[RMDB]
RNA sequence: GGGAACGACUCGAGUAGAGUCGAAAAGAUCUGCGCCGAUCCGAAACGCUAGCAAACAGCCCGCAUCAUGUCGCCUCCUAACUUCGACGUGGUGAAAUACUGAGCUUAUGCGAGUAAGCCUGUUAGCAAUAGAUCAGAACGUUCGCGUUCUGAUCAAGAAAACUCAUCUGUUCGCAGAUGAGUUUUCAAAAGAAACAACAACAACAAC
Reactivity to 2A3 in 0.01 (KOAc 150mM, MgCl2 10mM, bicine 150mM(pH8.5), 24C), signal-to-noise 5, nucleotides 027 to 156: g020a030u030c030u110g020c040g010c060c010g030a060u030c030c020g070a070a050a040c070g000c030u050a030g030c040a050a070a100c010a060g060c020c010c010g030c000a020u000c000a000u020g000u020c000g040c010c040u140c020c040u120a140a160c050u110u070c040g010a000c000g000u010g000g000u000g020a050a010a010u140a030c040u030g010a020g010c000u030u020a010u090g090c040g010a040g060u010a020a000g010c000c030u050g020u060u050a030g020c050a090a120u070a210g010a000u000c000a000g000a000a000c000g010u070u060c190g000c000g100u000u000c020u000g000a000u000c000a000a000
Reactivity to DMS in 0.01 (KOAc 150mM, MgCl2 10mM, bicine 150mM(pH8.5), 24C), signal-to-noise 2, nucleotides 027 to 156: g020a090u000c010u010g030c060g000c020c030g000a090u000c020c050g010a100a070a060c090g000c030u000a050g000c040a090a070a180c090a080g030c020c010c040g050c030a030u020c020a050u000g000u000c000g030c140c030u000c050c060u000a060a090c070u000u010c030g020a020c030g070u000g020g010u000g000a070a050a120u010a100c100u000g000a110g000c000u010u010a110u010g000c150g010a180g000u010a030a080g010c000c040u000g040u010u000a100g010c050a120a150u000a150g000a040u010c010a000g000a010a000c010g030u000u000c250g030c020g030u000u010c000u010g000a020u000c000a020a130
Source information:
This 207-nucleotide RNA was probed chemically with 2A3 and DMS. For DMS the reverse transcriptase was MarathonRT. For 2A3 the reverse transcriptase was SuperScript II with manganese. In probing experiments dimethyl sulfate is read out at A N1 and C N3, which are open when not base-paired. For 2A3, 4,545 sequencing reads were counted. Conditions: 150 mM KOAc, 10 mM MgCl2 and 150 mM bicine (pH 8.5), 24 C.